Chemical mapping of a 177-nucleotide RNA with DMS and 2A3. The DMS profile rests on 1,983 reads. Source: RMDB library OK2TST, as collected in RNAgym. 2A3 adducts were read by reverse transcription with SuperScript II with manganese. Values are in units of 0.01, from 0 to 300, in steps of 10. The RNA was probed in 150 mM KOAc, 10 mM MgCl2 and 150 mM bicine (pH 8.5) at 24 C.
RNA sequence: GGGAACGACUCGAGUAGAGUCGAAAACAUACCGAUCAGGCCCGAACGCACCGCGCUAUGGGUCGUGCCGGCGGCCUGGGCGAUGCCGGCGGUGCCGAGGCCGGCCUCGUUGGAGAAGAUCCCGCGACCCUAAAUAGUGCUUCGGCACUAUUUAGGGAAAAGAAACAACAACAACAAC
Reactivity to DMS in 0.01 (KOAc 150mM, MgCl2 10mM, bicine 150mM(pH8.5), 24C), signal-to-noise 2, nucleotides 027 to 126: c110a100u010a110c020c000g020a050u000c180a070g010g030c020c000c010g000a120a170c260g020c020a030c030c040g000c050g000c120u000a080u010g020g000g010u000c140g010u000g010c060c040g010g020c080g000g000c030c000u000g000g000g000c000g000a030u000g010c020c030g010g020c000g010g000u000g010c010c070g010a210g020g000c060c100g020g020c040c040u000c140g000u010u010g010g010a090g000a120a150g000a170u000c000c010c000g030c160g000a200
Reactivity to 2A3 in 0.01 (KOAc 150mM, MgCl2 10mM, bicine 150mM(pH8.5), 24C), signal-to-noise 1, nucleotides 027 to 126: c010a050u150a040c000c040g060a100u070c000a000g000g020c000c000c010g040a120a020c040g020c010a000c030c000g050c000g050c220u190a230u300g030g040g020u030c000g000u050g120c050c000g080g000c040g020g020c010c030u010g000g020g000c020g040a050u100g080c020c000g060g000c040g000g030u080g030c030c050g040a100g070g000c030c000g030g020c000c000u040c000g000u000u080g060g000a070g010a120a060g050a050u020c020c000c000g000c020g040a080